Structure probing data (DMS and 2A3) for a 177-nucleotide construct. The reactions ran in a buffer of 150 mM KOAc, 10 mM MgCl2 and 150 mM bicine (pH 8.5), at 24 C. For 2A3 the reverse transcriptase was SuperScript II with manganese.

RNA sequence: GGGAACGACUCGAGUAGAGUCGAAAACAAUUUCAUAAUGAACAUAAUGAGGAGAAAAAUGGAAGAUAUAACAAGAGCAAAAUUGAACUUCCGUAGAUGAGAAAUAUGAUUUCAAAAUUCUCUUGGACUAGUCCGUAGUGUUCGCACUACGGACUAGAAAAGAAACAACAACAACAAC
Reactivity to DMS in 0.01 (KOAc 150mM, MgCl2 10mM, bicine 150mM(pH8.5), 24C), signal-to-noise 1, nucleotides 027 to 126: c140a140a090u090u020u000c000a000u010a030a100u030g010a180a120c050a090u000a170a000u000g000a160g010g000a030g000a010a130a050a040a040u060g000g000a070a060g050a100u050a090u020a150a080c070a000a000g000a090g030c230a010a020a140a170u000u000g000a000a030c080u000u060c070c040g020u000a020g030a220u000g000a200g000a030a160a070u000a070u000g000a020u000u000u000c010a020a040a020a240u010u000c000u000c010u020u000g000g000a270
Reactivity to 2A3 in 0.01 (KOAc 150mM, MgCl2 10mM, bicine 150mM(pH8.5), 24C), signal-to-noise 3, nucleotides 027 to 126: c030a000a050u040u150u080c060a070u130a290a050u100g210a190a060c020a110u230a260a070u210g030a100g070g070a070g030a030a060a050a050a050u080g070g020a060a060g120a110u020a010u070a300a100c010a040a000g000a010g050c110a090a050a160a050u020u030g000a010a030c000u050u000c050c080g000u000a030g070a260u130g010a050g080a120a090a000u180a040u100g090a090u020u000u010c010a010a030a000a140u070u000c000u020c000u040u000g050g000a060